[RMDB]
RNA sequence: GGGAACGACUCGAGUAGAGUCGAAAACUGAUGAGGAUCGAGGUGCCGCCGCCGCGCCGGCCGCCCGCCAUGCUGCCCCGGCAGGGCUCGCUCUACCACGAGAUGGGUGAGCGCCGGGGCCGGGGGGUACCAGGAUACGUUUCGACGUAUCCUGGUAAAAAGAAACAACAACAACAAC
Reactivity to DMS in 0.01 (KOAc 150mM, MgCl2 10mM, bicine 150mM(pH8.5), 24C), signal-to-noise 1, nucleotides 027 to 126: c050u000g000a110u000g010a210g000g020a060u010c050g000a120g000g020u000g000c050c060g000c010c040g000c060c110g030c110g020c080c020g000g000c000c100g000c020c010c020g000c060c050a050u000g020c120u000g010c000c030c000c000g000g020c000a190g010g010g000c000u010c010g010c000u000c010u010a300c050c060a150c150g010a140g030a140u000g000g010g020u000g020a060g010c020g050c040c030g040g000g010g010c020c030g000g000g010g030g000g020
An RNA of 177 nucleotides, treated with DMS and read out base by base. Values cover nucleotides 27 to 126.